This 177-nucleotide RNA was probed chemically with 2A3 and DMS. The DMS profile rests on 2,003 reads. For 2A3, 1,500 sequencing reads were counted. As a SHAPE reagent, 2A3 marks flexible, mostly unpaired nucleotides at the ribose 2'-OH. Conditions: 150 mM KOAc, 10 mM MgCl2 and 150 mM bicine (pH 8.5), 24 C.

[RMDB]
RNA sequence: GGGAACGACUCGAGUAGAGUCGAAAAAAUUUUUUCGGUCUGGUCAGACAAAUCAGUGACAUGAUGGUCAUAGCGAAAGCACACGCACGAAAUGUCACUGAUGAAAAAGUGCGUGUGACCAAUUUAACAGUAAGUUGGAUUUCGAUCCAACUUACUGAAAAGAAACAACAACAACAAC
Reactivity to 2A3 in 0.01 (KOAc 150mM, MgCl2 10mM, bicine 150mM(pH8.5), 24C), signal-to-noise 2, nucleotides 027 to 126: a000a000u110u000u010u010u020u020c000g020g010u000c040u030g040g140u150c080a020g000a020c000a000a070a000u020c000a000g010u010g010a000c000a040u080g050a110u170g130g010u060c060a100u300a040g020c050g020a090a030a010g000c000a000c000a000c010g050c000a050c070g090a250a000a050u010g020u000c010a000c020u000g020a000u010g000a030a010a010a010a010g000u000g040c020g040u030g000u000g000a020c020c000a020a120u120u160u140a130a050
Reactivity to DMS in 0.01 (KOAc 150mM, MgCl2 10mM, bicine 150mM(pH8.5), 24C), signal-to-noise 2, nucleotides 027 to 126: a040a030u000u010u000u020u010u020c050g010g010u000c010u000g020g040u020c150a050g000a040c020a120a140a050u000c000a000g010u000g000a010c000a060u000g040a160u000g040g030u000c000a040u010a110g010c000g010a120a050a110g010c010a150c060a020c020g000c000a050c130g000a050a050a020u000g000u000c000a000c000u000g000a020u000g010a030a020a020a070a080g040u000g020c010g030u000g000u000g000a000c010c030a060a080u010u000u010a060a110